[RMDB]
RNA sequence: GGGAACGACUCGAGUAGAGUCGAAAAGAAAGAAAUAAAGUUCAUUGUUUAUCGGAAACUUUAAACUAUAACCAUUCAAACUUUUCCAGAAGUUAGUUUGAAUAGAAAUUAAAAAGAAACUUCUGAAUAACCUUAUCAUGCUUCGGCAUGAUAAGAAGGUAAUUCUCUAGUUCGCUAGAGAAUUACCAAAAGAAACAACAACAACAAC
Reactivity to 2A3 in 0.01 (KOAc 150mM, MgCl2 10mM, bicine 150mM(pH8.5), 24C), signal-to-noise 1, nucleotides 027 to 156: g050a000a090a010g010a030a120a000u120a040a020a030g060u080u080c070a090u160u300g090u110u270u130a140u190c080g050g050a110a070a040c030u060u010u030a050a170a000c000u010a000u070a230a070c000c000a000u000u020c000a010a010a010c000u010u000u000u000c060c010a000g000a000a000g000u000u000a000g010u000u020u000g010a040a030u070a200g060a010a080a000u220u220a070a110a020a000a000g000a000a000a000c000u000u000c000u000g000a000a010u030a030a000c000c000u000u000a000u000c000a000u000g010c000u010u070c130g160g000c000a000u000g000a000u000a000a000g010a010a020